[RMDB]
Overview
The record gives the reactivity of an RNA of 207 nucleotides to DMS and 2A3. The RNA was probed in 150 mM KOAc, 10 mM MgCl2 and 150 mM bicine (pH 8.5) at 24 C.

RNA sequence: GGGAACGACUCGAGUAGAGUCGAAAAUGAUCUAUGACUGCAGCAAGCUUUUCCCAAUCUUGUAUAGUGAAUUUCAUAUAGGAAGCUUCAUUUUUGGGAGAAGAGUCCAAUGCUGUUAUAAAGCCCUGUUCCGAAGACGGCAGGAAAUCAGUCAGCACGUUUUAAUACGAUUCGUCGUAUUAAAACGAAAAGAAACAACAACAACAAC
Reactivity to DMS in 0.01 (KOAc 150mM, MgCl2 10mM, bicine 150mM(pH8.5), 24C), signal-to-noise 2, nucleotides 027 to 156: u000g020a120u000c060u000a120u010g000a040c030u000g010c030a100g040c030a090a150g000c020u000u010u000u000c000c000c010a040a040u000c010u000u000g050u000a160u000a020g020u000g020a100a300u000u000u000c060a130u010a210u000a250g020g020a100a300g020c030u000u000c020a040u000u010u000u000u000g010g000g010a080g040a020a040g010a100g020u000c070c040a070a200u000g020c010u000g010u000u000a080u000a020a090a130g000c090c010c010u000g010u000u010c040c010g030a100a180g010a180c070g020g040c010a080g000g000a060a030a060u000c000a060g010u000c040a080g000c040a170
Reactivity to 2A3 in 0.01 (KOAc 150mM, MgCl2 10mM, bicine 150mM(pH8.5), 24C), signal-to-noise 3, nucleotides 027 to 156: u120g010a030u060c030u100a070u130g010a010c010u020g010c000a000g000c000a010a060g010c010u000u000u010u000c010c000c000a000a000u000c000u030u030g010u070a120u120a170g020u030g070a140a090u100u200u110c080a030u240a060u120a240g150g010a030a000g020c000u010u020c010a010u000u030u010u000u000g010g000g010a020g010a050a000g010a020g140u040c060c020a040a030u020g010c000u010g010u040u060a080u080a070a060a020g010c000c000c010u000g020u220u110c030c020g040a070a060g120a170c030g020g000c000a000g000g000a020a030a050u060c010a000g030u000c000a000g030c040a010
The 2A3 profile rests on 2,367 reads. The DMS profile rests on 3,360 reads. It was measured as part of the RMDB library OK3TST.